This 207-nucleotide RNA was probed chemically with DMS and 2A3. The RNA was probed in 150 mM KOAc, 10 mM MgCl2 and 150 mM bicine (pH 8.5) at 24 C. High DMS reactivity at an A or C suggests that its Watson-Crick edge is free. For DMS, 2,302 sequencing reads were counted.
RNA sequence: GGGAACGACUCGAGUAGAGUCGAAAAGAGUACGCGAGAGCGUACUCAGCAUCCGAGAGGAUGCGAUGACUGUAGCGCCCUUGCCUUCGCUACAGUCUAUAGAUGUAGUGGUGUCAGCCGACCGACAUUAUUGCAUCGAACGGUCGGGUGCAAGGGACGAUAUAAAUGCUUUCGAGCAUUUAUAUCGAAAAGAAACAACAACAACAAC
Reactivity to DMS in 0.01 (KOAc 150mM, MgCl2 10mM, bicine 150mM(pH8.5), 24C), signal-to-noise 1, nucleotides 027 to 156: g000a000g020u000a010c000g020c020g000a300g020a300g040c020g030u000a020c000u000c010a060g000c000a000u000c020c020g010a300g000a300g000g000a000u010g000c000g030a040u000g000a040c030u000g020u000a010g010c050g030c100c000c030u020u000g000c020c050u000u010c050g000c010u020a000c000a020g010u000c020u010a050u010a150g000a150u000g000u000a020g090u000g000g030u020g000u000c040a290g000c100c160g040a100c110c000g020a100c000a030u010u020a050u010u010g000c040a040u000c020g020a050a100c100g040g030u010c050g020g000g010u000g000c000a000a000g000g000g010a300
Reactivity to 2A3 in 0.01 (KOAc 150mM, MgCl2 10mM, bicine 150mM(pH8.5), 24C), signal-to-noise 3, nucleotides 027 to 156: g000a000g000u000a010c000g010c020g000a020g000a010g100c000g000u000a000c000u010c000a000g000c000a000u000c000c000g030a040g010a020g090g000a000u030g030c030g020a120u130g000a000c000u010g010u010a000g010c010g040c010c020c010u000u010g060c020c040u210u240c020g000c000u000a000c000a010g010u000c000u010a090u040a010g030a010u020g050u020a020g030u040g000g050u020g010u010c040a000g100c090c090g120a150c060c050g010a000c030a000u030u100a030u080u060g000c010a030u030c020g020a050a040c050g060g100u110c040g030g040g030u050g000c010a030a010g020g000g010a030